[RMDB]
RNA sequence: GGGAACGACUCGAGUAGAGUCGAAAAUGUUUGCCCUUCGGGGCAAACAAUAGAAGCGUCACGAGCAAACGGCAAGCUCGGAAAUGGACGCAAUUGCCGAAAAUACCCUAUGUUUCGACAUAGGGAAGGUAUAAAAAGUUUUCGAACUUUUUAUACCAAAAGAAACAACAACAACAAC
Reactivity to 2A3 in 0.01 (KOAc 150mM, MgCl2 10mM, bicine 150mM(pH8.5), 24C), signal-to-noise 4, nucleotides 027 to 126: u040g000u000u000u030g020c020c000c000u000u040c270g040g000g020g000c000a000a010a000c000a010a000u160a020g150a160a030g000c000g020u030c040a040c260g030a020g000c020a150a140a030c010g010g000c010a040a020g000c010u000c010g000g000a110a130a050u250g090g020a000c000g010c010a010a110u140u090g020c010c000g040a060a020a010a030u180a080c000c000c000u000a000u010g010u000u060u110c230g070a010c000a000u000a000g000g010g000a000a020
Reactivity to DMS in 0.01 (KOAc 150mM, MgCl2 10mM, bicine 150mM(pH8.5), 24C), signal-to-noise 2, nucleotides 027 to 126: u000g000u000u020u000g020c000c000c000u010u010c200g050g020g010g010c000a000a000a000c000a060a060u000a110g000a200a170g000c000g020u000c020a220c000g000a010g010c010a040a080a090c040g000g030c030a170a150g000c000u010c010g000g000a020a080a120u010g010g000a020c010g020c030a080a060u010u000g010c010c000g000a110a090a040a060u000a090c010c010c000u000a000u000g000u000u000u000c110g010a010c010a010u000a010g010g000g000a000a000
This 177-nucleotide RNA was probed chemically with 2A3 and DMS. For 2A3 the reverse transcriptase was SuperScript II with manganese. DMS adducts were read by reverse transcription with MarathonRT. The data come from the RNA Mapping Database (RMDB), library M2PK50. Conditions: 150 mM KOAc, 10 mM MgCl2 and 150 mM bicine (pH 8.5), 24 C.